[RMDB]
RNA sequence: GGGAACGACUCGAGUAGAGUCGAAAAAUAGGCUUAUCAAGAGAGGUGGAGGGACUGGCCCGAUGAAACCCGGCAGCCAGAAAUGGUGCCAAUUCCUGCAGCGCAAACGUUGAAAGAUGAGCCGAUGAGACGUGUGUGUUCGCACACACGAAAAGAAACAACAACAACAAC
Reactivity to 2A3 in 0.01 (KOAc 150mM, MgCl2 10mM, bicine 150mM(pH8.5), 24C), signal-to-noise 5, nucleotides 027 to 129: a000u130a020g000g000c000u010u010a010u020c110a130a000g030a010g000a060g050g010u050g000g020a010g010g000g010a010c010u000g030g030c010c000c000g090a130u070g030a030a020a030c000c000c000g000g000c000a030g160c020c000a000g020a010a040a040u070g000g000u010g000c010c000a000a000u050u030c000c000u040g040c020a010g030c000g030c080a040a040a090c060g020u020u050g050a110a060a020g000a000u010g000a000g000c000c010g010a030u130g060a000g020a040
Reactivity to DMS in 0.01 (KOAc 150mM, MgCl2 10mM, bicine 150mM(pH8.5), 24C), signal-to-noise 3, nucleotides 027 to 129: a080u050a030g030g040c010u030u000a060u060c050a130a100g000a070g010a080g000g000u010g040g000a000g000g000g000a060c000u000g000g020c000c000c000g000a090u060g040a070a080a070c010c030c020g000g000c160a010g030c010c050a060g000a120a110a070u020g010g010u040g000c040c020a000a110u000u000c020c000u050g050c050a050g020c050g020c040a020a020a020c120g000u040u020g040a100a100a060g010a070u000g030a000g000c000c000g010a030u010g000a090g010a130